[RMDB]
RNA sequence: GGGAACGACUCGAGUAGAGUCGAAAACCAACCGCCUUCGGGCGGUUGGGAUGACAGUCGCGAGGAAAGUCCGGGCUGACUGUCCACGACACAACCCGGCUUAAAUCUAUCGCUUCGGCGAUAGAAAGCGAUAAGACUUUUUCGAAAGUCUUAUCGCAAAAGAAACAACAACAACAAC
Reactivity to 2A3 in 0.01 (KOAc 150mM, MgCl2 10mM, bicine 150mM(pH8.5), 24C), signal-to-noise 2, nucleotides 027 to 126: c000c000a000a000c020c000g100c010c040u090u090c270g160g000g000c010g020g020u000u030g000g020g020a040u040g010a010c010a010g000u010c020g040c100g170a130g050g160a240a010a020g050u070c040c010g050g010g000c030u020g010a020c010u010g010u020c000c000a100c070g020a020c040a000c000a100a070c000c000c000g020g050c040u050u110a060a190a060u030c000u010a000u000c000g000c000u040u040c240g090g000c010g010a000u010a010g000a010a010a000
Reactivity to DMS in 0.01 (KOAc 150mM, MgCl2 10mM, bicine 150mM(pH8.5), 24C), signal-to-noise 2, nucleotides 027 to 126: c000c000a020a040c020c000g020c000c010u000u010c230g010g020g020c000g000g020u000u000g000g000g000a020u000g010a040c040a010g000u000c020g000c210g000a260g000g000a110a060a060g020u000c000c000g000g000g000c030u000g020a020c000u000g000u000c000c090a130c200g000a070c090a080c080a120a150c000c000c000g000g010c080u000u000a030a060a130u000c000u010a000u000c000g000c000u000u020c190g000g010c000g000a020u000a000g010a000a070a050